The record gives the reactivity of an RNA of 177 nucleotides to DMS and 2A3.
The reactions ran in a buffer of 150 mM KOAc, 10 mM MgCl2 and 150 mM bicine (pH 8.5), at 24 C.
It was measured as part of the RMDB library RFM100.
2A3 adducts were read by reverse transcription with SuperScript II with manganese.
RNA sequence: GGGAACGACUCGAGUAGAGUCGAAAAUCAUGACGUGAAGGUGGUUUGUUGCCGUGUUGUGUGGCAGAAAGAAGAUAGCCCCGUAGUAAGUUAAUUUUCAUUAACCACCACGAGGCAUCCCUAUGUCACGAUAGGCGAUUUUCGAAUCGCCUAUCGUAAAAGAAACAACAACAACAAC
Reactivity to DMS in 0.01 (KOAc 150mM, MgCl2 10mM, bicine 150mM(pH8.5), 24C), signal-to-noise 2, nucleotides 027 to 126: u040c030a080u030g000a080c050g000u000g040a120a090g030g030u000g000g000u010u010u000g000u000u020g020c090c030g030u010g010u010u020g000u000g030u000g000g000c030a000g000a060a120a110g000a100a080g000a060u020a170g010c000c000c000c020g040u000a020g000u000a200a170g020u010u000a010a010u000u040u010u010c150a100u000u000a010a000c000c050a090c040c060a020c010g000a050g000g030c000a070u000c000c000c020u000a100u000g000u000c070
Reactivity to 2A3 in 0.01 (KOAc 150mM, MgCl2 10mM, bicine 150mM(pH8.5), 24C), signal-to-noise 2, nucleotides 027 to 126: u110c000a020u130g040a020c020g090u140g070a020a020g090g070u110g040g100u080u040u000g030u040u110g000c050c050g030u020g050u110u050g050u000g000u050g020g000c010a000g200a040a120a000g160a050a050g000a010u010a030g000c020c000c000c080g040u000a030g020u000a080a000g000u000u010a050a020u010u240u190u100c300a000u020u020a000a030c020c030a000c040c000a000c030g000a150g020g010c020a000u000c000c000c000u040a010u010g000u000c010